[RMDB]
RNA sequence: GGGAACGACUCGAGUAGAGUCGAAAACAAAGUAGGACGCGCCGUUACGGUAGCGUGCCCUGAACUCUUCACGUGUCAUAUCCGAGAAGGGUGUCACACCAAACGUUGCGUAUGGGUUCGCCGCAGCACUCCGCCAUGAUUUCGAUCAUGGCGGAGUAAAAGAAACAACAACAACAAC
Reactivity to 2A3 in 0.01 (KOAc 150mM, MgCl2 10mM, bicine 150mM(pH8.5), 24C), signal-to-noise 3, nucleotides 027 to 126: c020a000a120a050g140u130a040g110g010a010c000g020c000g040c030c010g100u260u270a090c130g060g000u050a070g040c000g020u060g030c000c000c000u050g040a040a020c000u000c010u070u050c060a010c080g030u030g050u060c060a070u060a060u210c010c020g010a020g030a080a020g010g030g020u010g100u070c040a090c010a020c040c040a070a070a050c060g030u020u080g000c000g030u040a140u140g060g090g000u040u040c010g020c030c010g000c020a000g030c010
Reactivity to DMS in 0.01 (KOAc 150mM, MgCl2 10mM, bicine 150mM(pH8.5), 24C), signal-to-noise 2, nucleotides 027 to 126: c070a110a090a050g010u010a100g020g000a030c000g020c000g000c060c010g000u000u000a060c100g040g050u000a080g020c010g000u000g010c030c030c040u000g000a140a020c010u000c010u000u000c010a100c050g000u000g010u030c300a100u030a120u000c070c000g010a110g020a100a000g000g000g030u020g020u000c080a030c120a140c040c100a040a050a110c110g010u000u010g030c040g000u000a090u000g000g000g010u020u000c050g000c090c000g010c050a060g000c080

An RNA of 177 nucleotides, treated with 2A3 and DMS and read out base by base.
The RNA was probed in 150 mM KOAc, 10 mM MgCl2 and 150 mM bicine (pH 8.5) at 24 C.